[RMDB]
RNA sequence: GGGAACGACUCGAGUAGAGUCGAAAAUGGCGUUGUCUCGUAGAGGUCCAGAUCUCUCCUGUUGGCAACUCGAAAUCUCUACGAGAUAACAGUUUAAUCCUCAGUGAGCUUUCGAGCUCACUGAGGAACGUGAAACUCAGUUCGCUGAGUUUCACGUAAAAGAAACAACAACAACAAC
Reactivity to DMS in 0.01 (KOAc 150mM, MgCl2 10mM, bicine 150mM(pH8.5), 24C), signal-to-noise 2, nucleotides 027 to 126: u010g010g000c120g000u020u000g000u000c000u000c010g010u000a010g000a020g000g000u000c050c040a300g010a030u000c110u020c190u000c020c020u010g000u030u010g010g020c300a150a080c140u000c020g000a060a120a030u000c000u020c000u000a010c010g000a020g000a000u000a000a000c020a070g030u000u000u000a090a180u000c000c010u010c000a000g000u000g020a010g020c020u000u000u000c210g020a020g010c000u000c000a000c000u000g000a000g010g000a000